[RMDB]
RNA sequence: GGGAACGACUCGAGUAGAGUCGAAAACAAGGAUCCCCGCAUAGCCGGAAAGGAACUGUCCGGAAUCCUCCACGUGGCGUAUCACGAAAUCAGGGAAAGCCACAUCCCCACUCGGAGUGGCCUUGAGAUCGAUGAGGAAUUUCGAUUCCUCAUCGAUAAAAGAAACAACAACAACAAC
Reactivity to 2A3 in 0.01 (KOAc 150mM, MgCl2 10mM, bicine 150mM(pH8.5), 24C), signal-to-noise 2, nucleotides 027 to 126: c010a010a020g040g020a110u050c000c040c040c010g050c080a160u200a110g060c020c000g030g090a080a050a070g150g040a100a050c070u090g040u000c040c010g010g050a020a070u030c010c020u000c000c020a060c070g020u020g030g000c110g070u090a100u260c000a010c080g050a100a050a090u120c020a050g110g020g000a100a050a010g000c010c000a010c000a090u020c010c000c020c010a090c000u080c040g020g010a040g020u050g010g000c010c000u060u030g040a090g000

The record gives the reactivity of an RNA of 177 nucleotides to 2A3. Reactivities are given for positions 27 through 126. It was measured as part of the RMDB library OK2TST. The reactions ran in a buffer of 150 mM KOAc, 10 mM MgCl2 and 150 mM bicine (pH 8.5), at 24 C.